[RMDB]
RNA sequence: GGGAACGACUCGAGUAGAGUCGAAAAGGGUUAGCGUUCGCGCUAACCCCAGGAUCGAACAUGUCAAAUCUCGCAGACAUGAAACGAUCAAAACCGAGAAAACUAGACAGUCAUUCGUGACUGUCAAAGACCUCAAGACAUUCGUGUCUUGAGGUCUAAAAGAAACAACAACAACAAC
Reactivity to 2A3 in 0.01 (KOAc 150mM, MgCl2 10mM, bicine 150mM(pH8.5), 24C), signal-to-noise 1, nucleotides 027 to 126: g030g000g000u000u000a010g000c000g040u050u060c240g000c000g050c160u000a010a010c010c010c000c010a020g110g000a020u010c000g000a030a050c000a000u010g010u010c050a000a110a190u180c200u090c150g300c180a110g010a010c000a000u020g000a050a060a040c000g020a000u000c000a020a050a030a030c060c010g060a090g230a090a200a000a040c110u050a050g000a010c010a010g010u000c000a000u010u130c090g110u070g000a020c000u010g000u000c000a000a000
Reactivity to DMS in 0.01 (KOAc 150mM, MgCl2 10mM, bicine 150mM(pH8.5), 24C), signal-to-noise 1, nucleotides 027 to 126: g000g000g010u000u000a040g000c000g030u000u020c240g050c080g000c090u000a000a000c000c000c000c080a080g000g030a000u000c000g030a130a300c010a000u000g010u000c000a040a120a110u010c080u020c230g060c260a180g010a000c000a000u000g000a030a090a100c010g020a000u000c000a010a050a030a180c020c000g000a220g000a080a020a040a040c090u000a070g000a000c000a000g000u010c000a050u000u000c220g040u000g000a030c020u010g020u000c030a040a050